[RMDB]
RNA sequence: GGGAACGACUCGAGUAGAGUCGAAAAUGAGCCAGUUAAAAUCCCAAGGUGCUCCUGCCAAGGCGCUGGACUGAGCCCAGGCCCAUCCCUUCGAACCAGAGCCUUUCCCCCCGCCUGGGUCCCCAGCGACAGAAGUGUUAUUCGUAACACUUCUGUCAAAAGAAACAACAACAACAAC
Reactivity to 2A3 in 0.01 (KOAc 150mM, MgCl2 10mM, bicine 150mM(pH8.5), 24C), signal-to-noise 1, nucleotides 027 to 126: u110g010a020g040c020c010a020g030u100u130a070a070a060a170u050c020c000c010a010a030g070g020u050g030c030u000c020c030u050g000c010c010a020a100g050g000c050g000c050u020g030g010a080c060u080g030a030g010c000c000c030a000g000g020c000c050c000a100u050c030c000c000u100u080c040g040a090a050c000c030a040g020a010g120c010c030u040u040u060c000c000c000c000c000c000g000c000c010u010g020g010g000u000c010c000c000c010a020g010c000
Reactivity to DMS in 0.01 (KOAc 150mM, MgCl2 10mM, bicine 150mM(pH8.5), 24C), signal-to-noise 4, nucleotides 027 to 126: u010g010a130g010c020c030a090g010u000u000a070a080a100a150u010c010c010c010a120a120g000g020u000g020c050u010c040c050u000g000c070c070a060a120g010g000c070g020c030u000g010g000a110c080u010g010a120g020c020c010c010a050g010g000c020c100c070a080u010c030c010c030u000u010c050g010a100a080c050c040a060g000a060g000c020c020u000u000u000c010c000c000c020c030c050g020c010c000u000g000g000g000u000c030c030c010c030a090g000c140
Conditions: 150 mM KOAc, 10 mM MgCl2 and 150 mM bicine (pH 8.5), 24 C. Structure probing data (2A3 and DMS) for a 177-nucleotide construct. For 2A3, 2,163 sequencing reads were counted. For DMS, 5,706 sequencing reads were counted. Values cover nucleotides 27 to 126.